RNA sequence: GGGAACGACUCGAGUAGAGUCGAAAAAUUGGUCGAAGUAGCUGGUGACGAUCCACUGGUCACCACCGAACAAUUGAUGCCGCUGUUACCGGUGGUGCGGGUAAAGGAUUUUGAUGCGGCCCUGACAAUACGCAGUGUAAUUCGUUACACUGCGUAUAAAAGAAACAACAACAACAAC
Reactivity to DMS in 0.01 (KOAc 150mM, MgCl2 10mM, bicine 150mM(pH8.5), 24C), signal-to-noise 7, nucleotides 027 to 126: a060u010u000g010g000u010c010g010a130a130g010u000a110g030c140u000g010g010u000g000a080c050g000a110u010c070c050a080c080u000g020g000u010c010a010c010c000a020c040c010g000a040a040c040a030a070u000u000g000a140u010g010c020c010g020c050u000g000u000u010a100c090c020g010g020u000g000g010u000g010c100g000g000g010u010a030a070a110g000g000a130u000u000u010u010g010a090u000g000c010g000g010c010c040c030u010g010a090c240a120
Reactivity to 2A3 in 0.01 (KOAc 150mM, MgCl2 10mM, bicine 150mM(pH8.5), 24C), signal-to-noise 4, nucleotides 027 to 126: a000u040u040g020g000u000c020g040a110a030g070u160a030g050c100u030g020g030u040g000a030c050g030a120u030c050c020a040c070u060g060g050u100c000a000c000c010a000c000c020g000a030a020c020a030a040u060u120g040a050u130g060c020c020g000c040u050g050u120u040a070c030c040g030g000u050g010g050u120g140c060g050g000g030u090a140a100a040g080g030a050u080u070u140u300g070a050u150g000c030g000g010c000c000c010u030g010a020c030a040
Notes
An RNA of 177 nucleotides, treated with DMS and 2A3 and read out base by base. Values cover nucleotides 27 to 126. For DMS the reverse transcriptase was MarathonRT. For 2A3, 5,178 sequencing reads were counted. The DMS profile rests on 12,339 reads.